[RMDB]
RNA sequence: GGGAACGACUCGAGUAGAGUCGAAAAGUUAGGUGAGGCUCCUAUGCAAACAAAGGCCACUGCCCAAAAAUGUCCAAAGACGCCAAUGGGUAGAACAGGGAUUGUCGGAUUAAGGCUUUCCAUAAUGAAAACAAAGUAUGCUUCGGCAUACUUUGAACAGUAUACAUUACUUCGGUAAUGUAUACUGAAAAGAAACAACAACAACAAC
Reactivity to DMS in 0.01 (KOAc 150mM, MgCl2 10mM, bicine 150mM(pH8.5), 24C), signal-to-noise 3, nucleotides 027 to 156: g000u000u010a080g020g020u000g010a140g000g020c020u010c050c040u010a130u000g020c040a140a100a160c060a040a070a170g000g030c020c010a120c030u010g000c000c000c010a000a040a100a100a090u000g010u000c020c050a120a150a250g020a090c050g000c040c060a040a280u000g000g010g020u000a020g000a100a110c080a180g000g020g010a060u000u010g020u010c010g020g000a240u000u000a070a140g030g030c060u000u000u000c010c030a100u010a100a080u010g000a070a110a110a220c000a000a000a040g010u000a000u000g000c010u000u000c300g060g020c000a000u000a010c000u010u000u000g010a020a070
Reactivity to 2A3 in 0.01 (KOAc 150mM, MgCl2 10mM, bicine 150mM(pH8.5), 24C), signal-to-noise 2, nucleotides 027 to 156: g040u030u030a010g010g010u020g050a060g020g020c030u080c030c010u060a080u220g070c080a040a110a120c030a050a100a030g030g000c020c020a030c000u000g010c010c010c000a000a030a030a000a000u020g000u010c020c020a170a060a180g000a010c000g010c020c000a010a050u020g010g000g000u010a020g010a040a040c070a070g020g020g050a020u020u040g010u040c010g000g060a080u130u200a130a070g010g000c010u010u000u000c010c000a040u130a160a130u170g120a030a050a020a040c000a000a000a000g000u000a000u000g000c000u020u070c160g090g000c010a000u000a000c000u000u000u000g000a010a000